Annotation: An RNA of 207 nucleotides, treated with 2A3 and read out base by base.
[RMDB]
RNA sequence: GGGAACGACUCGAGUAGAGUCGAAAAAGGACUGGUACGAUACGUCGUACCAGUGCAGUCGUUGGGAUGGAACGCAAUUAAAUACAUGUGUGACGUGUAUUUGCGAACGACGUAAUUAUUUUUCAAAAUCACGCUAUCGUGUUCGCACGAUAGCGAACAUCGGCAGCAUGUUCGCAUGCUGCCGAUGAAAAGAAACAACAACAACAAC
Reactivity to 2A3 in 0.01 (KOAc 150mM, MgCl2 10mM, bicine 150mM(pH8.5), 24C), signal-to-noise 2, nucleotides 027 to 156: a000g100g030a000c000u010g000g000u000a010c000g000a000u000a030c240g060u010c000g010u000a000c000c000a000g010u000g000c000a000g000u000c010g000u010u020g170g040g060a130u220g060g080a220a020c020g030c000a000a020u210u180a060a120a000u000a000c000a030u000g000u030g210u220g220a080c020g000u000g000u000a020u010u070u030g010c000g000a000a000c010g000a000c010g030u030a120a010u120u130a100u120u050u010u020u110c000a070a010a040a100u120c060a010c090g000c000u010a000u000c000g030u020g000u030u110c220g040c050a000c010g010a000u000a000g010c000g000a000a010